Chemical mapping of a 207-nucleotide RNA with DMS and 2A3. For DMS, 2,848 sequencing reads were counted. For 2A3, 3,942 sequencing reads were counted. The reactions ran in a buffer of 150 mM KOAc, 10 mM MgCl2 and 150 mM bicine (pH 8.5), at 24 C.
RNA sequence: GGGAACGACUCGAGUAGAGUCGAAAAACUCCUAUUCCAACACGUCCUCGUCGUACAGAGUGGUAACAUGUGUCACCACAUAUCCAAGCUUGGGUACACGGGCUCGACCCAACCCCUUGGGCGGAUGAAAACCAGAUUACGUUCGCGUAAUCUGGAACCUGGUAUAGAAGUUCGCUUCUAUACCAGGAAAAGAAACAACAACAACAAC
Reactivity to DMS in 0.01 (KOAc 150mM, MgCl2 10mM, bicine 150mM(pH8.5), 24C), signal-to-noise 2, nucleotides 027 to 156: a070c030u000c020c030u010a090u000u010c010c040a070a070c050a110c040g050u000c010c020u000c030g000u000c070g000u000a110c070a070g010a130g000u000g020g010u010a040a030c020a180u000g010u000g020u000c030a070c040c010a040c020a090u000a040u000c040c010a030a300g010c060u010u010g030g030g040u000a080c140a080c060g000g000g020c020u010c110g020a150c040c010c010a060a060c030c020c000c020u010u010g000g000g030c300g010g000a120u030g000a090a050a120a160c000c000a000g000a010u000u000a020c010g060u000u000c290g020c010g040u000a000a000u000c000u000g020g000a000a020
Reactivity to 2A3 in 0.01 (KOAc 150mM, MgCl2 10mM, bicine 150mM(pH8.5), 24C), signal-to-noise 6, nucleotides 027 to 156: a010c080u050c030c000u070a100u090u080c040c030a060a040c040a030c090g060u050c010c030u050c060g070u030c020g040u120a100c040a080g120a060g080u030g010g020u090a080a040c060a150u190g090u070g050u150c040a030c030c000a030c030a050u110a010u030c000c000a020a000g030c020u010u010g000g000g010u020a010c010a020c050g010g000g000c030u110c110g300a300c010c000c000a010a030c000c000c000c000u010u010g010g000g000c010g000g000a010u030g060a040a080a010a010c010c000a000g000a000u000u000a010c010g010u020u060c170g010c000g080u000a000a000u000c000u000g000g010a000a000